[RMDB]
RNA sequence: GGGAACGACUCGAGUAGAGUCGAAAAGUUUUGCACGUAUCGUCGGUCGUACUGUCGGUAUCAUCGCCAACCAGCCAAACGUGAUGUCGGGUGUCCUAGACAUCAACUCUUCUGACAAGGGCAGCCAGGGAUAUACCUAUUUCGAUAGGUAUAUCCCAAAAGAAACAACAACAACAAC
Reactivity to DMS in 0.01 (KOAc 150mM, MgCl2 10mM, bicine 150mM(pH8.5), 24C), signal-to-noise 5, nucleotides 027 to 126: g010u000u000u000u000g010c070a060c140g010u000a040u000c050g020u000c060g000g010u010c090g020u000a240c070u010g010u000c090g010g000u000a070u010c060a050u010c080g020c030c040a060a090c060c060a070g020c030c080a020a040a110c170g010u000g010a020u000g010u000c030g010g010g010u000g000u000c020c020u000a110g010a030c020a030u000c020a040a070c070u000c050u000u010c060u000g010a060c100a080a090g000g000g000c030a060g000c080c100a140
Reactivity to 2A3 in 0.01 (KOAc 150mM, MgCl2 10mM, bicine 150mM(pH8.5), 24C), signal-to-noise 4, nucleotides 027 to 126: g000u010u020u090u130g020c040a020c090g020u050a030u070c030g040u010c020g040g050u040c060g040u080a050c040u030g060u110c040g020g020u030a040u100c040a030u050c040g020c030c000a020a050c020c010a030g060c030c020a090a080a040c050g050u060g020a020u040g010u030c020g000g000g070u100g030u020c000c010u030a060g010a020c010a010u020c010a010a060c030u030c020u140u020c030u040g040a040c040a090a040g000g000g000c010a010g050c020c000a020